[RMDB]
RNA sequence: GGGAACGACUCGAGUAGAGUCGAAAAUCAUUGAGAUGCUGGGCGCUAUGGUCGUCCUCAUCCGGCUGACCUCCUUCUCAGCUGCUGACCGGCGCCGCACAGGCGGCAUCUCAGCUUCGUGUGCAAAAAAAGAAUGGUCGGUUCGCCGACCAUUCAACCAAAGGGUAACCUUCGGGUUACCCUUUGGAAAAGAAACAACAACAACAAC
Reactivity to DMS in 0.01 (KOAc 150mM, MgCl2 10mM, bicine 150mM(pH8.5), 24C), signal-to-noise 1, nucleotides 027 to 156: u000c050a110u000u000g020a020g030a030u000g010c000u010g010g010g030c010g000c040u000a020u020g080g000u010c030g050u000c080c100u000c060a090u010c080c030g030g030c010u000g000a030c040c130u000c150c160u000u000c060u000c000a030g030c010u000g010c040u010g010a010c010c000g010g000c010g060c000c000g000c060a090c080a140g030g040c020g000g060c010a000u010c000u010c020a010g050c060u000u010c050g020u010g000u020g010c030a010a000a040a070a070a190a270g000a070a000u000g010g010u010c010g040g030u000u020c300g030c020c000g000a000c010c000a010u000u000c010a070a160